[RMDB]
RNA sequence: GGGAACGACUCGAGUAGAGUCGAAAACAAGUAGAAGAGUAACGUGCUCAAGUUAGCAUUUUAGACCACUUUGGCUGCAAUAUAGAGAACGAAUGGGAUGAAGUGACCCUAGGGAGUAGGUUAUUUCGGUAAAUAGGGUUGGCAGUGAUGGUGGCCAUCGCUCCAUUAGUUUCGACUAAUGGAGCGAAAAAGAAACAACAACAACAAC
Reactivity to DMS in 0.01 (KOAc 150mM, MgCl2 10mM, bicine 150mM(pH8.5), 24C), signal-to-noise 1, nucleotides 027 to 156: c020a080a070g020u010a020g010a130a110g050a060g090u000a050a110c070g010u000g010c000u000c010a080a200g030u000u000a140g020c020a070u010u020u000u010a070g010a090c030c010a030c030u000u020u010g000g030c010u010g040c040a080a070u000a100u010a190g000a120g000a040a080c130g000a070a110u010g010g020g020a170u000g000a020a120g030u010g020a100c000c010c010u000a060g030g000g020a100g020u000a060g030g000u000u000a070u000u000u000c050g020g060u000a000a040a110u000a080g000g020g000u000u000g000g050c070a020g000u000g020a080u000g000g000u020g010g030c010c020a120
Reactivity to 2A3 in 0.01 (KOAc 150mM, MgCl2 10mM, bicine 150mM(pH8.5), 24C), signal-to-noise 4, nucleotides 027 to 156: c060a070a040g100u120a020g070a180a010g060a010g060u080a110a060c070g030u030g040c010u040c050a080a020g030u100u150a000g010c020a040u000u050u080u170a060g010a070c000c030a030c060u060u040u090g050g000c010u010g000c020a030a000u080a020u030a120g100a010g020a120a010c040g030a070a050u120g010g000g070a010u090g030a050a000g020u030g060a010c000c000c020u010a010g080g030g030a060g040u070a060g000g000u040u070a060u030u100u040c030g020g020u080a070a110a060u070a100g070g000g000u050u050g030g000c000a000g010u030g060a050u050g030g020u010g000g020c020c000a030